[RMDB]
Description:
Structure probing data (DMS) for a 177-nucleotide construct. DMS adducts were read by reverse transcription with MarathonRT. Source: RMDB library TTRINS, as collected in RNAgym.
RNA sequence: GGGAACGACUCGAGUAGAGUCGAAAAGAUAUGGAUAUGAUGUGGAGCCAGACACUAAGCAGCUAUUUUAUCGGAAACGAUAAAAUAGCUGCUUAGUGUGUGGCGUUGAAACAUAUAUCCUAAGUCACAGUGUAACGAAGUUCGCUUCGUUACACUGAAAAGAAACAACAACAACAAC
Reactivity to DMS in 0.01 (KOAc 150mM, MgCl2 10mM, bicine 150mM(pH8.5), 24C), signal-to-noise 3, nucleotides 027 to 126: g010a040u010a300u010g010g010a030u000a000u010g020a030u000g010u000g010g000a230g020c000c000a010g000a020c010a000c000u010a010a020g010c000a010g000c000u000a000u000u000u000u000a000u000c000g020g020a190a090a220c000g000a010u000a000a000a010a010u000a000g000c000u010g000c010u000u000a000g020u000g030u000g000u010g000g010c000g010u000u010g010a160a140a020c000a000u000a040u000a010u010c000c000u000a040a120g000u010c030a230
The reactions ran in a buffer of 150 mM KOAc, 10 mM MgCl2 and 150 mM bicine (pH 8.5), at 24 C.
Values cover nucleotides 27 to 126.